[RMDB]
RNA sequence: GGGAACGACUCGAGUAGAGUCGAAAACACCCGCAAUUCGUUGCGGGUGAGAGCACCACUCCUCCGGGAGUUAAGGCCAUACGGACAGCCGGGUGCAAAGCCAUAGCAGGUCCUUCGGGACCUGCAAACUACUAGGCAUGUUCGCAUGCCUAGUAGUAAAAGAAACAACAACAACAAC
Reactivity to 2A3 in 0.01 (KOAc 150mM, MgCl2 10mM, bicine 150mM(pH8.5), 24C), signal-to-noise 2, nucleotides 027 to 126: c000a000c000c010c010g000c000a020a040u070u080c210g060u050u010g000c000g000g000g000u010g000a010g020a010g030c000a000c000c000a000c000u010c000c000u030c070c160g080g000g000a020g020u020u150a090a020g010g020c010c000a040u050a080c090g020g050a000c000a020g000c010c000g040g000g000u010g000c000a030a010a000g000c020c000a030u080a020g010c010a000g000g020u000c030c000u080u130c240g050g010g000a010c000c000u010g000c000a000a000
Reactivity to DMS in 0.01 (KOAc 150mM, MgCl2 10mM, bicine 150mM(pH8.5), 24C), signal-to-noise 2, nucleotides 027 to 126: c000a020c000c000c010g010c000a010a020u000u000c170g020u000u000g000c000g010g000g000u000g010a010g000a100g000c010a020c000c020a080c010u000c000c000u000c280c160g000g010g010a000g030u010u000a060a090g030g010c010c010a070u000a060c170g000g000a040c040a180g000c000c000g000g000g000u000g000c000a060a030a100g010c000c010a030u000a090g000c000a020g000g000u000c000c000u000u000c140g010g000g010a010c000c000u000g010c000a010a020